[RMDB]
RNA sequence: GGGAACGACUCGAGUAGAGUCGAAAAUAGAAGUAAAUCAAGGAUUUCAGACAGGAGUGCCUGGCAUAUGUUGUAUAGCCAGCUCAAGGAUAUAUUGAAGGCAGGAGAUGACAGAUCCUAGGUUCUCUGUCUUAGGACCAUUCGUGGUCCUAAGACAAAAAGAAACAACAACAACAAC
Reactivity to DMS in 0.01 (KOAc 150mM, MgCl2 10mM, bicine 150mM(pH8.5), 24C), signal-to-noise 1, nucleotides 027 to 126: u000a070g000a090a070g030u000a010a090a140u010c040a090a100g020g000a100u000u000u020c090a060g030a060c040a050g020g010a060g020u020g010c070c040u000g010g020c080a040u000a040u010g010u000u000g020u020a050u000a090g030c010c000a050g010c090u000c070a040a100g010g000a080u000a090u010a090u000u020g020a090a080g000g000c040a080g050g000a050g010a080u000g000a020c100a050g010a040u000c090c020u000a020g030g020u000u000c020u000c010